[RMDB]
RNA sequence: GGGAACGACUCGAGUAGAGUCGAAAAGGCCACGAACAAGCAUGGUGAGGCCACGGUCUCUUGCAAAUUGCAGGUUAAGGGUCGCCAAGGCAUCGUUAUGGAGCCCCAGUUACCCUCCAACUUCCGCCCUCAUCAUCGAGUUCGCUCGAUGAUGAGGAAAAGAAACAACAACAACAAC
Reactivity to DMS in 0.01 (KOAc 150mM, MgCl2 10mM, bicine 150mM(pH8.5), 24C), signal-to-noise 1, nucleotides 027 to 126: g020g020c030c000a040c060g010a050a070c050a120a170g000c020a050u020g000g030u000g010a100g000g000c020c070a110c150g050g000u040c020u000c040u000u020g010c030a080a080a110u020u030g020c040a000g000g010u000u010a150a100g000g000g000u000c010g040c000c010a160a090g010g000c020a070u000c100g040u000u000a100u000g020g030a100g020c020c000c020c080a070g000u000u000a110c030c010c010u000c050c110a100a100c060u000u000c010c040g040c230
Reactivity to 2A3 in 0.01 (KOAc 150mM, MgCl2 10mM, bicine 150mM(pH8.5), 24C), signal-to-noise 2, nucleotides 027 to 126: g050g000c020c070a000c060g040a040a010c050a040a010g020c020a020u090g030g070u060g020a030g040g030c010c010a000c030g110g040u000c060u000c000u060u040g020c020a060a260a300u300u120g020c030a030g020g000u060u100a030a040g030g020g020u020c040g000c020c030a000a010g060g000c020a080u040c050g090u130u140a090u240g090g020a020g020c000c010c010c000a000g000u040u050a060c000c000c010u040c030c050a040a060c030u030u000c040c010g000c030